[RMDB]
RNA sequence: GGGAACGACUCGAGUAGAGUCGAAAAGAAAUUAUUUCAACUGUACACUUAUAGCCUAAUUCACUUAGCGUACUGUGACGUAUUCUAUACUAACGUGGAUUACAAAUCGACGUUCAAGUGAAAGAAAGGCUAUACUAAACUUCGGUUUAGUAUAGCCAAAAGAAACAACAACAACAAC
Reactivity to DMS in 0.01 (KOAc 150mM, MgCl2 10mM, bicine 150mM(pH8.5), 24C), signal-to-noise 3, nucleotides 027 to 126: g000a060a030a050u000u040a020u010u020u000c070a100a080c080u000g000u000a020c170a080c040u010u010a030u020a070g020c050c010u000a030a150u000u000c000a020c010u000u000a000g020c010g020u000a070c050u020g060u000g010a300c140g000u000a020u000u000c000u030a020u000a120c120u020a050a040c290g020u010g020g020a000u000u000a040c010a020a080a040u010c050g000a000c000g000u000u000c210a010a000g000u000g000a000a050a020g020a110a080a050
Reactivity to 2A3 in 0.01 (KOAc 150mM, MgCl2 10mM, bicine 150mM(pH8.5), 24C), signal-to-noise 7, nucleotides 027 to 126: g060a000a100a020u250u160a120u040u110u060c060a100a080c070u110g070u190a040c070a040c080u140u110a110u130a160g030c000c020u080a110a100u010u010c000a010c010u010u000a010g000c010g020u050a140c050u210g030u020g050a020c100g010u000a030u020u000c010u000a060u010a210c080u140a120a050c140g040u040g020g000a000u010u010a010c000a010a110a030u010c000g020a000c010g020u020u010c070a010a010g000u010g010a050a020a010g070a030a050a000
Source information: Structure probing data (DMS and 2A3) for a 177-nucleotide construct. The data come from the RNA Mapping Database (RMDB), library OK1LIB. For DMS, 3,185 sequencing reads were counted. As a SHAPE reagent, 2A3 marks flexible, mostly unpaired nucleotides at the ribose 2'-OH. Conditions: 150 mM KOAc, 10 mM MgCl2 and 150 mM bicine (pH 8.5), 24 C.